Notes
Structure probing data (DMS and 2A3) for a 207-nucleotide construct. The DMS profile rests on 4,341 reads. Reactivities are rounded to 0.1 and cut off at 0 and 3.

[RMDB]
RNA sequence: GGGAACGACUCGAGUAGAGUCGAAAAAAGCUAAUACUGUAGUGAUCAACCCAGAACAAGAAGCUCAAUUUUUGAAGAACAAGAACAUCCGUGACGCAUUCCGUCAGAACAACACUGAUCUAGUUUUGCUUCGUGGAUAUCUUGGAGACUUCAUGGGCUUAGAUAGACCGUUCGCGGUCUAUCUAAGAAAAGAAACAACAACAACAAC
Reactivity to DMS in 0.01 (KOAc 150mM, MgCl2 10mM, bicine 150mM(pH8.5), 24C), signal-to-noise 2, nucleotides 027 to 156: a090a070g000c020u010a060a060u000a100c090u000g000u000a070g020u000g000a180u010c070a080a150c020c010c020a240g070a090a070c050a120a110g000a070a050g000c010u000c000a040a110u000u000u000u000u000g020a030a060g010a090a140c020a020a050g000a050a090c050a050u010c010c000g020u000g050a020c020g010c020a050u000u000c060c070g020u010c000a010g010a090a100c090a090a130c170a090c000u010g000a060u000c060u010a060g000u020u000u000u000g030c010u000u000c010g040u000g010g000a020u000a050u000c040u000u010g030g000a130g010a080c010u000u000c010a030u000g010g000g020
Reactivity to 2A3 in 0.01 (KOAc 150mM, MgCl2 10mM, bicine 150mM(pH8.5), 24C), signal-to-noise 4, nucleotides 027 to 156: a010a000g070c100u110a120a070u210a300c110u160g070u140a030g030u040g060a130u120c050a050a090c000c000c030a010g070a090a060c090a060a030g110a040a000g030c020u030c070a090a200u090u090u110u190u170g020a020a020g000a030a020c000a000a010g000a050a030c020a050u000c000c000g030u010g000a000c030g000c010a020u000u020c020c020g000u010c010a000g070a100a000c090a060a010c030a050c020u020g000a020u050c030u150a060g040u030u000u040u070g010c000u000u000c000g010u000g000g000a010u010a000u010c000u000u010g020g030a040g070a060c000u020u000c030a050u040g010g030g010